Source: RMDB library RNAMAK, as collected in RNAgym. Chemical mapping of a 207-nucleotide RNA with 2A3. The 2A3 profile rests on 1,535 reads. Reactivities are given for positions 27 through 156.
RNA sequence: GGGAACGACUCGAGUAGAGUCGAAAACCCAGUUCUUCGGAACUGGGAAAAAGAUAUGGAAGAGAAGCUCCUUGGAUUUACGGCGUGGUCGGAAACGACCACCGAGUUGUCAGGAGCUCUCUUCCUAAGUCAAAAAAACACUGGUUCGCCAGUGUAAGACACACUUUCAGUUCGCUGAAAGUGUGUCAAAAGAAACAACAACAACAAC
Reactivity to 2A3 in 0.01 (KOAc 150mM, MgCl2 10mM, bicine 150mM(pH8.5), 24C), signal-to-noise 2, nucleotides 027 to 156: c000c000c000a000g000u000u010c000u020u130c270g140g020a000a000c000u020g000g010g130a080a100a000a040a000g040a020u100a020u050g020g020a010a000g010a000g060a240a070g010c050u000c010c030u120u150g200g010a110u220u220u260a030c030g050g020c120g050u020g000g000u010c000g040g000a090a070a080c010g000a000c000c030a000c000c000g010a030g040u020u060g030u100c070a040g000g010a000g010c000u010c000u000c000u000u000c010c000u000a010a010g010u010c000a000a000a000a000a200a000a000c000a000c050u070g020g080u070u070c210g040c060c010a000g000u000g000u000a000a030